[RMDB]
This 207-nucleotide RNA was probed chemically with 2A3. The 2A3 profile rests on 976 reads. For 2A3 the reverse transcriptase was SuperScript II with manganese. It was measured as part of the RMDB library OK3TST.
RNA sequence: GGGAACGACUCGAGUAGAGUCGAAAACGGCGCCUGACUGGUCACGUGAAGCGCGUGAGCGGUUCAAGGCCGGUUGGCGAGGGCAGUAUGGUGGCGGCGGUUCGGACGCGUACGGCACGCCGAUCCUCGAGGACGGCAUGAAGUUCGUGCCGGCCACGAGCUUACUCUGUUUCGACAGAGUAAGCUCAAAAGAAACAACAACAACAAC
Reactivity to 2A3 in 0.01 (KOAc 150mM, MgCl2 10mM, bicine 150mM(pH8.5), 24C), signal-to-noise 2, nucleotides 027 to 156: c030g020g000c060g000c000c000u050g110a020c000u020g030g120u030c030a030c120g090u060g090a140a020g150c050g000c030g040u040g000a010g000c000g050g060u120u110c020a010a060g000g020c010c000g030g010u050u010g030g000c020g000a090g010g000g060c030a010g020u150a070u220g030g060u040g010g030c060g000g050c000g000g030u170u200c050g020g090a170c050g020c000g020u050a050c000g000g000c030a020c040g000c000c010g020a240u030c000c030u090c050g030a080g000g020a010c010g000g000c000a010u090g030a110a020g030u160u100c010g000u000g010c000c000g030g000c000c010a090c030